[RMDB]
RNA sequence: GGGAACGACUCGAGUAGAGUCGAAAAGAUAUGGACCAGGCCUCUUUUGACGCUCGCAUGGUCGGAAACGACCAUGAUGAGCGAUAAGAGGCUGGUCCUAAGUCAAACUGAAGGUUCGCCUUCAGAAGUAAGAUUCAGACUUCGGUCUGAAUCUUACAAAAGAAACAACAACAACAAC
Reactivity to DMS in 0.01 (KOAc 150mM, MgCl2 10mM, bicine 150mM(pH8.5), 24C), signal-to-noise 1, nucleotides 027 to 126: g020a050u000a280u030g030g040a000c010c010a030g060g000c010c000u000c010u000u000u000u020g030a240c230g020c010u000c000g010c000a000u010g000g030u000c000g020g020a120a080a110c010g000a000c020c000a010u000g000a030u010g010a000g010c000g080a050u020a030a030g000a010g000g000c000u000g010g010u000c000c000u020a010a080g000u000c020a100a130a290c020u000g010a040a020g000g010u000u010c300g000c000c000u000u000c010a010g000a060a180
Reactivity to 2A3 in 0.01 (KOAc 150mM, MgCl2 10mM, bicine 150mM(pH8.5), 24C), signal-to-noise 2, nucleotides 027 to 126: g050a010u060a000u130g020g030a010c030c000a000g300g300c020c030u050c070u000u150u070u300g300a230c300g000c020u010c000g000c000a000u000g030g000u000c000g000g030a070a070a000c050g010a020c040c000a040u020g160a230u080g000a000g000c020g000a010u060a010a010g010a020g000g010c010u000g000g000u020c000c010u000a010a020g000u000c010a020a040a110c000u000g000a010a000g070g000u090u170c300g270c020c000u050u020c010a010g150a040a010